[RMDB]
RNA sequence: GGGAACGACUCGAGUAGAGUCGAAAAGAUAUGGAUCGUGAACUACACGGUAGUGUCGGAAACGACAUUUCCGUGCACGAGUCCUAAGUCAAAGCCGACGCCAGUAGUUCGCUACUGGCGUCGGCAACAUAAUCAAAAGGUUCGCCUUUUGAUUAUGAAAAGAAACAACAACAACAAC
Reactivity to 2A3 in 0.01 (KOAc 150mM, MgCl2 10mM, bicine 150mM(pH8.5), 24C), signal-to-noise 2, nucleotides 027 to 126: g010a020u080a040u180g020g010a020u020c000g010u010g010a050a070c060u200a040c300a000c030g010g020u020a000g020u020g000u020c000g010g010a110a060a030c000g010a000c000a020u020u030u030c000c000g000u000g000c010a000c010g020a010g160u100c010c000u060a120a000g080u040c020a140a080a010g000c010c010g070a000c060g130c000c060a010g100u040a000g030u100u090c270g020c170u040a020c080u030g040g060c000g000u020c010g000g020c000a000a000
Reactivity to DMS in 0.01 (KOAc 150mM, MgCl2 10mM, bicine 150mM(pH8.5), 24C), signal-to-noise 4, nucleotides 027 to 126: g010a060u000a300u000g000g010a240u000c000g010u000g010a090a030c080u010a300c010a000c000g010g010u000a010g030u000g000u000c000g010g000a100a060a220c010g020a010c000a030u000u000u000c000c000g010u000g000c000a000c000g000a040g000u000c000c000u000a050a140g000u000c040a080a090a140g000c000c000g000a050c020g000c000c000a000g010u000a000g020u000u020c200g010c000u010a000c000u000g000g030c000g000u000c000g000g000c010a010a030